Chemical mapping of a 207-nucleotide RNA with 2A3 and DMS. The RNA was probed in 150 mM KOAc, 10 mM MgCl2 and 150 mM bicine (pH 8.5) at 24 C. It was measured as part of the RMDB library M2RFPK.

RNA sequence: GGGAACGACUCGAGUAGAGUCGAAAAUGCUAAGGGUUUGAUAUCUGCUAAAACCCGGUGCAUUCAUCAAUGCAGGCUAAGCCAAAGGGAUGUCCCGACCGGAGGCCGACAAUCCAGGGAACCGGAUAAAAGAUUGGUGGGUUCGCCCACCAAUCAACAUCCCCGUAAAGUUCGCUUUACGGGGAUGAAAAGAAACAACAACAACAAC
Reactivity to 2A3 in 0.01 (KOAc 150mM, MgCl2 10mM, bicine 150mM(pH8.5), 24C), signal-to-noise 1, nucleotides 027 to 156: u060g000c020u050a090a040g000g000g020u000u000u000g050a050u030a090u210c070u060g050c030u050a010a020a010a010c000c010c020g000g000u030g000c000a030u070u170c020a060u070c020a040a170u090g010c030a010g040g000c000u050a010a050g000c010c000a040a020a030g030g010g000a020u040g030u040c000c000c000g000a020c000c020g000g010a000g020g020c000c000g000a000c020a100a080u060c080c070a030g040g040g030a050a070c100c040g080g010a050u140a120a100a010a030g010a000u010u000g020g010u010g000g000g010u050u080c140g030c060c000c000a000c000c000a000a000u000c000a000a000
Reactivity to DMS in 0.01 (KOAc 150mM, MgCl2 10mM, bicine 150mM(pH8.5), 24C), signal-to-noise 1, nucleotides 027 to 156: u000g030c000u000a300a170g000g000g000u000u000u000g000a200u000a070u000c080u010g020c100u010a120a020a020a000c010c000c000g000g000u000g010c020a040u000u070c040a190u000c020a080a130u020g040c050a110g040g000c000u000a100a100g000c000c020a040a300a200g010g000g000a070u000g020u000c000c020c000g040a110c040c010g010g010a300g000g020c040c010g000a110c050a050a110u000c040c050a020g040g000g010a180a100c070c000g000g000a090u000a020a120a110a120g000a040u000u010g010g050u010g040g000g010u000u000c290g000c000c000c000a020c010c000a000a000u000c000a040a200